Chemical mapping of a 177-nucleotide RNA with DMS and 2A3. 2A3 adducts were read by reverse transcription with SuperScript II with manganese. Source: RMDB library RFMREP, as collected in RNAgym. The RNA was probed in 150 mM KOAc, 10 mM MgCl2 and 150 mM bicine (pH 8.5) at 24 C.

RNA sequence: GGGAACGACUCGAGUAGAGUCGAAAAUCAAGUCCAUCGGAGAGAUCAUCAUUUUGUUCAUCUUAAUGCCCUUUUGUGUAGGAAAUUGAGGGAAGUUUAGGCUUCUCAACAUUUUAAGACGCCUAUGCCAUUGUACGUUCUUCGGAACGUACAAUGGAAAAGAAACAACAACAACAAC
Reactivity to DMS in 0.01 (KOAc 150mM, MgCl2 10mM, bicine 150mM(pH8.5), 24C), signal-to-noise 2, nucleotides 027 to 126: u000c090a060a090g000u000c040c090a040u000c060g030g000a140g000a140g010a020u000c010a030u020c130a100u000u000u000u000g000u000u000c080a070u010c040u010u010a010a060u000g000c040c040c030u000u010u010u010g020u000g000u000a090g040g000a040a050a040u000u000g040a300g000g000g000a010a010g020u000u000u010a140g050g000c000u000u000c000u000c000a040a200c130a040u000u000u000u000a090a120g000a110c180g010c050c020u000a020u020g010
Reactivity to 2A3 in 0.01 (KOAc 150mM, MgCl2 10mM, bicine 150mM(pH8.5), 24C), signal-to-noise 1, nucleotides 027 to 126: u080c000a040a020g020u050c010c020a050u050c040g040g020a040g000a020g010a050u000c000a000u010c030a030u000u120u090u120g020u060u030c040a080u060c060u000u090a120a050u050g030c000c020c000u000u090u110u080g090u010g020u010a000g000g070a050a010a050u060u040g020a010g000g030g000a000a000g010u010u050u010a120g040g000c020u000u040c000u000c010a020a110c000a020u040u110u040u120a040a030g140a030c040g070c010c000u060a070u150g000